[RMDB]
RNA sequence: GGGAACGACUCGAGUAGAGUCGAAAAAGCACGGUUUUUGAGGACGCAUUUUGUCCGUGCGGUAAUGCCCUCCUUUACACUUUCUCGCAUGGUGCGGGAGUGUGGAGAGGAAAUAAAAGCUAGUCUCGAUAGGCGGUUAACUUCGGUUAACCGCCAAGAUGUAUACCAAGUUCGCUUGGUAUACAUCAAAAGAAACAACAACAACAAC
Reactivity to DMS in 0.01 (KOAc 150mM, MgCl2 10mM, bicine 150mM(pH8.5), 24C), signal-to-noise 3, nucleotides 027 to 156: a180g020c010a020c010g010g020u000u000u000u000u000g000a090g020g000a040c020g000c060a160u000u010u000u000g030u000c030c010g010u000g000c000g000g020u000a090a120u000g000c000c000c010u010c000c020u000u000u000a060c010a010c020u000u010u000c010u010c010g070c000a300u010g030g000u010g040c010g000g000g010a020g000u000g000u030g010g000a040g010a070g010g000a060a050a060u000a020a040a060a050g000c060u000a130g010u000c000u000c100g020a150u010a140g000g010c010g030g010u000u000a010a020c010u000u010c300g050g000u000u010a010a030c000c000g040c000c010a000a020
Reactivity to 2A3 in 0.01 (KOAc 150mM, MgCl2 10mM, bicine 150mM(pH8.5), 24C), signal-to-noise 8, nucleotides 027 to 156: a000g010c010a010c010g000g010u000u000u000u000u010g070a110g000g030a010c030g020c090a100u000u000u000u030g090u000c000c000g000u000g000c010g020g040u130a080a040u160g040c000c000c010u020c000c000u010u010u040a010c000a000c000u060u140u020c010u010c010g030c020a090u260g270g030u290g160c000g000g010g000a000g000u010g000u000g000g000a030g010a020g000g030a000a030a000u060a010a020a000a010g060c050u080a030g010u000c000u000c040g060a110u120a120g000g000c000g000g000u010u000a000a000c000u030u040c160g010g000u000u000a000a000c010c000g000c000c000a000a000